RNA sequence: GGGAACGACUCGAGUAGAGUCGAAAAGAUAUGGAGCGAGUCGAUAAGCAGGUAUCGGAAACGAUACCCUGCUUUUGACGACUCCUCCUAAGUCAAAUCGGAAACAGUGUUCGCACUGUUUCCGAAACGUUUAGUAGGAGUUCGCUCCUACUAAACGAAAAGAAACAACAACAACAAC
Reactivity to DMS in 0.01 (KOAc 150mM, MgCl2 10mM, bicine 150mM(pH8.5), 24C), signal-to-noise 5, nucleotides 027 to 126: g010a030u000a200u000g010g000a010g000c140g010a010g000u000c000g010a060u010a020a010g020c010a030g010g000u000a000u010c000g020g000a060a030a110c010g010a010u000a010c130c120c070u000g000c000u000u000u000u010g010a280c050g000a030c000u000c000c000u000c000c000u000a000a050g000u000c020a070a110a150u010c000g000g000a010a010a010c000a000g010u000g000u010u010c240g020c000a010c010u000g000u000u000u000c000c000g000a000a010a060
Reactivity to 2A3 in 0.01 (KOAc 150mM, MgCl2 10mM, bicine 150mM(pH8.5), 24C), signal-to-noise 5, nucleotides 027 to 126: g020a010u040a010u080g000g000a010g050c250g010a000g030u010c000g020a080u050a300a010g000c000a000g020g000u010a000u010c000g020g000a040a020a010c010g000a000u010a010c030c010c010u000g000c010u010u010u020u020g030a010c000g000a000c000u000c010c000u000c000c000u000a080a000g030u000c030a020a020a220u050c010g000g000a000a010a000c010a010g010u010g060u150u190c290g090c100a020c000u000g000u000u000u000c010c000g000a000a000a000
This 177-nucleotide RNA was probed chemically with DMS and 2A3. The RNA was probed in 150 mM KOAc, 10 mM MgCl2 and 150 mM bicine (pH 8.5) at 24 C. Reactivities are given for positions 27 through 126. DMS adducts were read by reverse transcription with MarathonRT. For DMS, 8,866 sequencing reads were counted. It was measured as part of the RMDB library TTRDEL.